RNA sequence: GGGAACGACUCGAGUAGAGUCGAAAAUCCUGUGGUUACACCUCGGAAGGCCUCCGCGGACCUGCAGAGAAAAGAAGAAGGGCCCAGAGGGGAAUGAGCCUCGUCGUCGACGAAGGGGUGCAUUCCGCCCUUUACUAAAGUUCGCUUUAGUAAAGGGAAAAGAAACAACAACAACAAC
Reactivity to 2A3 in 0.01 (KOAc 150mM, MgCl2 10mM, bicine 150mM(pH8.5), 24C), signal-to-noise 5, nucleotides 027 to 126: u020c010c000u040g020u070g040g020u070u110a060c040a050c040c010u010c020g010g060a110a050g080g010c010c010u040c020c030g010c040g020g030a100c000c000u040g010c050a010g090a020g030a150a160a030a030g060a050a020g050a030a070g040g020g000c030c030c030a050g050a060g060g120g000g000a010a020u020g000a010g020c000c000u000c000g030u010c010g040u050c110g060a300c050g010a060a020g030g000g000g000u010g040c000a000u010u020c000c000g030
Reactivity to DMS in 0.01 (KOAc 150mM, MgCl2 10mM, bicine 150mM(pH8.5), 24C), signal-to-noise 6, nucleotides 027 to 126: u000c010c000u010g020u010g000g010u000u000a110c180a180c030c030u000c030g010g010a120a080g010g000c130c020u000c060c060g010c150g010g000a100c070c010u010g000c080a080g010a120g000a060a050a100a090g000a090a100g020a130a120g010g000g000c020c020c030a090g010a120g010g010g010g000a020a010u000g000a170g000c010c000u000c000g010u000c010g000u010c220g010a130c030g010a030a040g010g000g000g020u000g000c010a030u000u000c010c020g000